Chemical mapping of a 207-nucleotide RNA with 2A3 and DMS. The DMS profile rests on 3,339 reads. 2A3 adducts were read by reverse transcription with SuperScript II with manganese.
[RMDB]
RNA sequence: GGGAACGACUCGAGUAGAGUCGAAAACAUAGCGUUUCACAAUGUGCGCCAUUAACAUUGUUUAUGCAAGCACGUUUCGCAAUGUACGGCGCAGAUACAUUGCCAACACAAAUACGCUUCACGAUGUAAAACAUCGGUGCGUUCGCGCACCGAUGAACCCUUAUUCGAUCUUCGGAUCGAAUAAGGGAAAAGAAACAACAACAACAAC
Reactivity to 2A3 in 0.01 (KOAc 150mM, MgCl2 10mM, bicine 150mM(pH8.5), 24C), signal-to-noise 5, nucleotides 027 to 156: c020a050u130a030g010c000g020u040u120u120c110a050c000a020a010u030g020u020g040c020g020c010c040a050u140u140a050a020c010a020u020u070g050u030u050u070a070u130g070c080a080a070g060c070a050c160g020u020u080u080c010g000c010a010a010u010g000u050a010c060g020g020c020g000c030a000g010a020u130a010c010a000u000u030g000c010c050a100a030c050a050c030a120a150a020u140a050c030g020c010u100u110c090a070c100g100a050u110g050u270a030a050a060a000c000a010u000c000g000g000u000g000c010g000u010u020c080g020c000g000c060a000c000c050g000a000u000g000a000a000
Reactivity to DMS in 0.01 (KOAc 150mM, MgCl2 10mM, bicine 150mM(pH8.5), 24C), signal-to-noise 2, nucleotides 027 to 156: c050a040u010a060g030c000g050u000u000u000c070a100c030a100a030u000g000u000g010c000g050c070c020a150u010u000a100a090c050a070u020u000g050u000u000u000a100u040g040c010a030a090g020c070a150c090g000u000u000u000c140g010c050a010a000u010g030u000a100c050g020g020c010g000c110a040g000a140u010a060c000a020u000u000g000c030c000a070a100c090a140c110a080a070a140u010a030c000g000c020u000u000c040a080c120g030a140u000g000u000a040a070a060a080c000a020u000c000g040g010u000g000c000g010u000u000c300g040c000g050c000a000c000c040g020a000u010g000a060a030